[RMDB]
RNA sequence: GGGAACGACUCGAGUAGAGUCGAAAAACUUUGGCCGACGCUGCUAGGCGGGUGCGCACUGCUGUCUGGCCCGGCGCCGCGCUAGGGCGCACGUUACGCUCUGCGGAGGGUAACCGGGCUGAAAUAAAUCCUCUGCAUCAUUCGUGAUGCAGAGGAUAAAAGAAACAACAACAACAAC
Reactivity to DMS in 0.01 (KOAc 150mM, MgCl2 10mM, bicine 150mM(pH8.5), 24C), signal-to-noise 1, nucleotides 027 to 126: a060c050u000u000u000g020g000c040c020g000a060c040g030c000u000g010c070u000a070g000g010c050g000g010g000u000g030c050g030c040a050c040u000g010c060u030g020u000c040u000g010g010c010c070c050g010g040c130g040c020c010g000c080g020c070u020a020g020g000g000c000g000c040a030c120g010u000u000a050c000g000c050u000c000u000g050c060g010g000a070g010g010g000u000a030a090c010c020g000g000g030c010u000g000a060a050a120u000a030a110
Chemical mapping of a 177-nucleotide RNA with DMS. The RNA was probed in 150 mM KOAc, 10 mM MgCl2 and 150 mM bicine (pH 8.5) at 24 C. For DMS the reverse transcriptase was MarathonRT.